[RMDB]
RNA sequence: GGGAACGACUCGAGUAGAGUCGAAAAAUGGUAGAACGAGGUCCCCACUGUCCCUAGCUAGAACUUAGUGAACCUGCUAUUCUGGUGCACAAGCCAGAGUCUUCCAUUGGGAAGCGAAGACCCCGUAAAUUCUACGACUUUUCGAAGUCGUAGAAUUAAAAGAAACAACAACAACAAC
Reactivity to DMS in 0.01 (KOAc 150mM, MgCl2 10mM, bicine 150mM(pH8.5), 24C), signal-to-noise 6, nucleotides 027 to 126: a040u010g000g030u020a050g010a080a080c100g000a060g010g010u010c010c020c010c030a070c070u000g000u000c020c010c020u000a070g000c030u010a060g010a110a080c100u010u000a080g020u010g010a070a080c080c020u020g020c080u020a040u020u000c010u010g010g020u020g010c110a100c250a060a170g000c010c000a010g000a050g000u020c030u010u000c000c010a210u030u020g010g010g010a060a020g010c100g000a040a060g000a090c020c010c010c030g020u020a060
Reactivity to 2A3 in 0.01 (KOAc 150mM, MgCl2 10mM, bicine 150mM(pH8.5), 24C), signal-to-noise 7, nucleotides 027 to 126: a000u080g040g020u060a050g030a140a010c030g010a040g020g060u070c020c010c000c000a010c020u050g060u040c000c000c000u010a030g000c020u020a030g030a100a100c040u090u030a030g010u060g090a020a030c020c010u020g060c010u030a050u080u040c000u010g010g000u080g020c110a080c040a240a000g000c000c000a000g000a000g020u010c010u030u000c000c000a110u040u090g120g010g010a030a020g040c040g030a040a020g020a060c000c000c000c010g020u040a050
Source information:
Structure probing data (DMS and 2A3) for a 177-nucleotide construct. Reactivities are rounded to 0.1 and cut off at 0 and 3.